[RMDB]
RNA sequence: GGGAACGACUCGAGUAGAGUCGAAAAAAUGAUUACUUUUUAAUGUCAAUAGAAGAUGUAUUUUCUAUAACAGGUAGAGGUACAGUAGUAACAGGUAAGAUUGAACAAGGAUGUAUAAAUUUAAAUGCCACAUUAGAUUGUUCGCAAUCUAAUGUGGAAAAGAAACAACAACAACAAC
Reactivity to 2A3 in 0.01 (KOAc 150mM, MgCl2 10mM, bicine 150mM(pH8.5), 24C), signal-to-noise 2, nucleotides 027 to 126: a000a000u120g010a090u180u070a060c020u280u180u100u020u110a130a120u110g020u020c000a000a000u020a080g020a030a030g030a020u080g020u040a270u040u050u030u000c010u000a030u070a270a060c060a050g000g160u030a000g020a000g020g010u030a040c020a000g080u080a000g020u050a200a000c080a080g000g080u040a040a000g070a160u050u140g050a030a010c030a100a040g000g030a050u030g050u030a080u080a110a110a050u080u200u070a130a170a040u100g000
Reactivity to DMS in 0.01 (KOAc 150mM, MgCl2 10mM, bicine 150mM(pH8.5), 24C), signal-to-noise 2, nucleotides 027 to 126: a100a010u010g010a200u000u010a050c010u010u010u020u010u000a150a170u000g000u010c000a090a060u000a040g010a060a060g010a080u000g010u020a040u000u010u010u000c000u000a010u000a170a050c100a030g020g000u000a020g000a020g000g030u000a030c050a040g010u000a050g020u000a060a100c120a040g000g020u010a050a070g020a050u000u000g010a050a030c090a060a080g010g020a080u000g010u010a080u000a060a050a060u010u010u000a040a140a100u020g010